[RMDB]
RNA sequence: GGGAACGACUCGAGUAGAGUCGAAAAGGAGUGCUACCGAAAGGUAGCACUCCAACAAAUCGGUGUAAGUCGAGCCAGUCUUACACCGUGCGGCACAGCGGAAACGCUGAUGUCGUAUACAAGGCUACUAAAUUACUGGAUUCGUCCAGUAAUUUAGAAAAGAAACAACAACAACAAC
Reactivity to DMS in 0.01 (KOAc 150mM, MgCl2 10mM, bicine 150mM(pH8.5), 24C), signal-to-noise 7, nucleotides 027 to 126: g020g010a010g040u000g020c000u010a000c000c000g010a120a120a160g020g020u000a010g000c000a000c000u000c000c000a020a040c100a040a050a040u010c010g020g010u010g000u000a000a020g010u010c080g000a040g000c010c010a300g010u000c000u000u000a010c000a010c010c000g020u000g000c000g000g020c000a020c000a000g000c000g010g000a130a100a200c000g020c000u000g000a050u000g040u000c000g020u000a040u010a120c190a070a070g000g000c010u000a190
Reactivity to 2A3 in 0.01 (KOAc 150mM, MgCl2 10mM, bicine 150mM(pH8.5), 24C), signal-to-noise 3, nucleotides 027 to 126: g010g000a000g010u010g010c000u000a000c010c010g060a080a080a070g010g000u000a000g010c000a010c000u000c000c000a000a000c000a000a000a000u090c000g000g000u000g000u010a000a010g010u020c040g040a010g020c020c010a080g050u030c000u000u000a000c000a000c000c000g000u020g000c000g000g010c000a000c000a010g000c010g020g030a060a060a020c020g010c000u000g010a050u000g000u000c000g000u010a010u030a020c080a040a050g020g000c010u030a040